The record gives the reactivity of an RNA of 177 nucleotides to DMS and 2A3. The DMS profile rests on 189,514 reads.
RNA sequence: GGGAACGACUCGAGUAGAGUCGAAAAAGGCUAGUAGCUAGCAGGCGGCUGUUGGCUCGAACCGAAUGGGCUAGCAGCGAGGUCAGCACUGCUAGUCUUGUGGCUUUAGCAGUCAGCAGCUACUGAGGGCGCGGGCGUGGUUCGCCAUGUUUGCGCCAAAAGAAACAACAACAACAAC
Reactivity to DMS in 0.01 (KOAc 150mM, MgCl2 10mM, bicine 150mM(pH8.5), 24C), signal-to-noise 9, nucleotides 027 to 126: a050g010g000c010u000a030g010u020a070g010c070u010a070g030c010a140g010g010c060g010g000c000u000g010u010u000g000g000c000u000c010g010a060a100c070c060g030a070a050u020g000g000g000c000u000a000g000c010a010g000c070g000a060g020g010u010c040a050g020c030a130c000u000g000c000u000a000g010u000c000u000u000g000u040g000g010c130u000u000u020a080g020c100a020g010u000c020a030g010c020a020g000c000u000a010c010u010g000a150g010
Reactivity to 2A3 in 0.01 (KOAc 150mM, MgCl2 10mM, bicine 150mM(pH8.5), 24C), signal-to-noise 9, nucleotides 027 to 126: a000g030g000c010u010a000g030u020a010g050c050u010a020g010c000a010g030g020c030g010g000c000u000g000u010u000g010g000c000u000c000g010a030a010c030c000g030a060a080u090g000g000g000c000u000a000g000c000a000g000c010g060a040g020g080u090c020a000g010c010a000c000u000g000c000u000a000g000u000c000u000u040g000u020g010g000c030u030u030u070a020g000c020a010g020u030c010a000g000c000a000g000c000u000a010c000u010g020a060g040